[RMDB]
RNA sequence: GGGAACGACUCGAGUAGAGUCGAAAACGUAACGCACUUUUGGAGGAAGUACCACAUUUAUUCCUCUGCUACCUAAGGCAUUAGCAGGUAAUUUUGUUGAGCGGUAGGCUAUACCAACAACAUUCUCAUUGCUGUUCCGACUGAUCCAUUGCAUCAAAAUAUGCAGGACGUUCGCGUCCUGCAUAUUAAAAGAAACAACAACAACAAC
Reactivity to 2A3 in 0.01 (KOAc 150mM, MgCl2 10mM, bicine 150mM(pH8.5), 24C), signal-to-noise 3, nucleotides 027 to 156: c070g010u050a080a000c020g030c060a090c060u010u100u110u270g040g010a020g030g000a030a020g040u080a060c030c030a050c070a100u140u220u100a070u040u000c000c020u050c010u010g030c000u030a080c010c010u040a070a070g010g000c040a070u080u050a000g000c030a050g000g020u050a080a140u070u030u070u070g000u000u010g010a040g050c050g000g040u020a000g130g000c010u080a040u020a110c050c000a010a070c010a020a000c000a050u120u060c030u020c050a070u070u120g010c030u040g050u090u010c020c010g030a030c030u020g010a010u010c020c010a060u070u180g030c010a030u070c030a070a020
Reactivity to DMS in 0.01 (KOAc 150mM, MgCl2 10mM, bicine 150mM(pH8.5), 24C), signal-to-noise 2, nucleotides 027 to 156: c080g020u020a060a060c100g010c040a060c040u010u000u020u010g020g000a150g030g000a060a070g020u000a130c050c070a030c100a100u010u010u000a190u020u000c010c020u000c030u000g000c010u000a110c040c000u010a080a100g010g030c050a080u000u000a070g050c030a080g020g000u020a080a110u000u000u000u000g030u000u000g010a120g000c060g040g030u010a110g020g010c090u000a160u000a160c080c010a070a100c010a040a110c040a040u000u000c040u000c080a220u000u000g000c070u010g020u010u000c050c020g030a120c050u000g030a110u000c020c010a170u010u010g000c080a110u000c100a030a110